[RMDB]
RNA sequence: GGGAACGACUCGAGUAGAGUCGAAAAAGAGAGUGCAGGGAGCGAGAGGGGCGUGUGUGUGCACUACAGCUUCCAUGCAGUGCGAGUAAAGAAUAGCAUAUACGCCAGAGGCCAUGCAGGCAAGGAGCAUUAGCUCGACUUUCGAGUCGAGCUAAUGAAAAGAAACAACAACAACAAC
Reactivity to DMS in 0.01 (KOAc 150mM, MgCl2 10mM, bicine 150mM(pH8.5), 24C), signal-to-noise 5, nucleotides 027 to 126: a030g000a070g000a070g050u010g010c030a070g000g010g020a080g030c080g020a070g020a120g020g000g030g000c000g010u000g000u000g000u000g010u010g000c020a010c030u000a080c040a090g020c160u020u040c110c090a120u010g010c060a040g020u010g000c000g000a130g020u040a080a090a120g010a110a140u060a160g020c030a020u010a030u010a010c050g000c020c010a080g000a130g010g000c020c020a040u010g010c080a060g000g000c080a080a040g020g010a130g020
Reactivity to 2A3 in 0.01 (KOAc 150mM, MgCl2 10mM, bicine 150mM(pH8.5), 24C), signal-to-noise 7, nucleotides 027 to 126: a000g110a010g020a010g000u060g000c020a020g020g040g020a060g040c040g020a090g010a060g080g100g010g000c020g000u000g000u000g000u010g020u060g010c020a000c030u110a070c040a050g020c010u180u080c050c020a050u120g000c010a000g000u000g020c040g070a100g060u210a040a120a060g120a060a160u110a090g010c000a010u040a010u020a050c030g000c000c000a030g030a050g110g000c010c010a040u110g040c040a030g050g000c040a050a050g070g010a030g050
Structure probing data (DMS and 2A3) for a 177-nucleotide construct. The 2A3 profile rests on 8,070 reads. Source: RMDB library OK1LIB, as collected in RNAgym. For DMS the reverse transcriptase was MarathonRT.